[RMDB]
RNA sequence: GGGAACGACUCGAGUAGAGUCGAAAAUACAGCGUAUAUGGAUCCGUGAUACGGAUGGGAGUGAGCGUGAGUGAGGGAUGGAACGAGUUGGUGAGUGAGGGAUGGCUCGCCCAUCCUCUUCUCUCUCCCCAUCCCAGCGGCUGGCUCGUCAGCUCAAUGUUAGUACCCGAUUCGUCGGGUACUAACAAAAAGAAACAACAACAACAAC
Reactivity to 2A3 in 0.01 (KOAc 150mM, MgCl2 10mM, bicine 150mM(pH8.5), 24C), signal-to-noise 3, nucleotides 027 to 156: u150a010c040a020g060c070g090u130a060u060a040u240g110g010a060u040c050c000g010u070g070a090u120a220c020g000g000a010u020g060g030g010a050g030u120g020a040g030c060g030u110g020a050g030u070g060a120g020g000g000a000u020g020g000a070a100c080g020a020g060u150u080g090g050u110g020a110g030u050g030a060g010g070g000a020u030g010g000c060u120c170g040c040c010c000a010u010c000c000u040c010u080u090c010u000c010u000c000u000c020c010c000c000a010u040c000c000c010a010g020c010g040g030c000u040g000g000c030u010c060g070u060c010a020g010c010u000c080a020a070
Reactivity to DMS in 0.01 (KOAc 150mM, MgCl2 10mM, bicine 150mM(pH8.5), 24C), signal-to-noise 2, nucleotides 027 to 156: u000a100c040a120g010c060g030u000a140u010a130u010g030g020a060u000c020c020g010u010g000a170u010a160c040g000g010a080u000g010g010g050a180g020u000g000a070g010c050g040u000g000a080g030u000g000a130g020g040g030a050u010g020g010a040a100c120g010a080g030u010u000g010g030u000g030a060g050u000g020a090g020g010g000a040u000g010g020c020u010c220g000c090c000c030a020u000c000c000u010c030u020u020c000u020c010u000c030u000c010c060c010c020a060u000c010c000c000a100g040c050g010g000c000u000g080g000c010u000c040g040u010c060a070g000c010u000c050a030a300
The record gives the reactivity of an RNA of 207 nucleotides to 2A3 and DMS. 2A3 adducts were read by reverse transcription with SuperScript II with manganese. It was measured as part of the RMDB library OK3TST. Conditions: 150 mM KOAc, 10 mM MgCl2 and 150 mM bicine (pH 8.5), 24 C. Reactivities are given for positions 27 through 156. As a SHAPE reagent, 2A3 marks flexible, mostly unpaired nucleotides at the ribose 2'-OH.